[RMDB]
RNA sequence: GGGAACGACUCGAGUAGAGUCGAAAAGCGGGGUUGAAUUCCUCAUUUGAGGCAUCGUAAUUGUUUGGUCUGCCCUUGACAAGUGGUGUUGAAGGUUGGGUCUUGCGCAAUGGGAACCUGUGAACCACGAUCGAAAAAAUUUCGAUUUUUUCGAUCGAAAAGAAACAACAACAACAAC
Reactivity to DMS in 0.01 (KOAc 150mM, MgCl2 10mM, bicine 150mM(pH8.5), 24C), signal-to-noise 6, nucleotides 027 to 126: g020c060g020g010g020g010u010u010g010a100a140u010u010c000c010u010c030a240u020u020u030g010a030g000g000c200a050u020c070g010u010a090a070u000u010g010u010u000u010g000g000u000c020u010g010c040c000c030u000u010g000a040c060a070a110g010u000g000g000u000g020u000u010g010a070a030g000g010u000u010g010g010g010u000c010u010u010g000c090g000c040a030a050u010g000g010g010a060a100c030c020u000g000u010g000a110a150c040c040a160
Reactivity to 2A3 in 0.01 (KOAc 150mM, MgCl2 10mM, bicine 150mM(pH8.5), 24C), signal-to-noise 7, nucleotides 027 to 126: g030c030g000g010g010g030u050u100g060a070a080u100u040c000c000u030c040a070u120u120u250g030a030g000g000c010a040u020c040g050u080a110a040u080u060g050u090u060u120g020g020u030c010u030g030c000c020c000u040u040g050a040c040a100a070g050u050g100g080u050g050u090u070g090a080a030g040g010u040u040g020g000g000u000c000u040u070g070c090g000c020a020a060u040g010g000g050a010a050c000c010u020g010u040g050a010a010c010c010a010
Source information:
An RNA of 177 nucleotides, treated with DMS and 2A3 and read out base by base. Conditions: 150 mM KOAc, 10 mM MgCl2 and 150 mM bicine (pH 8.5), 24 C. Values cover nucleotides 27 to 126.